[RMDB]
RNA sequence: GGGAACGACUCGAGUAGAGUCGAAAACGUUACAAAGCAAGAUUUAACAAUCAAUGGUUACGACAACAUUUUUGUUAUUGGUGACUGUUCAGCGUUUAUCCCAGCUGGAGAAGAACGUCCAUUACCAUCUCCCCAAGGGAUUCGUCCCUUGGGGAGAAAAAGAAACAACAACAACAAC
Reactivity to DMS in 0.01 (KOAc 150mM, MgCl2 10mM, bicine 150mM(pH8.5), 24C), signal-to-noise 2, nucleotides 027 to 126: c060g000u000u040a140c110a010a150a140g030c100a230a030g000a040u060u000u000a060a140c040a000a140u020c100a020a030u050g000g000u000u000a020c180g000a050c060a030a030c060a060u000u000u000u010u000g070u000u020a130u030u000g000g010u000g020a000c030u000g030u010u010c210a030g010c280g060u000u000u000a070u020c000c020c030a080g000c040u000g030g000a050g000a090a120g040a050a020c120g010u040c000c020a070u020u000a060c060c000a150
Reactivity to 2A3 in 0.01 (KOAc 150mM, MgCl2 10mM, bicine 150mM(pH8.5), 24C), signal-to-noise 3, nucleotides 027 to 126: c010g000u020u070a130c060a130a210a030g070c030a090a060g020a150u050u080u040a040a040c020a000a030u180c060a020a080u040g040g040u120u130a120c150g060a060c130a110a010c000a090u050u010u050u070u050g000u000u000a010u000u060g200g010u010g040a040c050u030g050u050u110c060a000g000c000g000u000u000u020a040u010c010c000c000a000g040c060u070g040g030a090g030a190a050g060a150a050c030g070u000c010c000a020u120u010a070c000c030a050

An RNA of 177 nucleotides, treated with DMS and 2A3 and read out base by base. The reactions ran in a buffer of 150 mM KOAc, 10 mM MgCl2 and 150 mM bicine (pH 8.5), at 24 C. For 2A3, 1,597 sequencing reads were counted.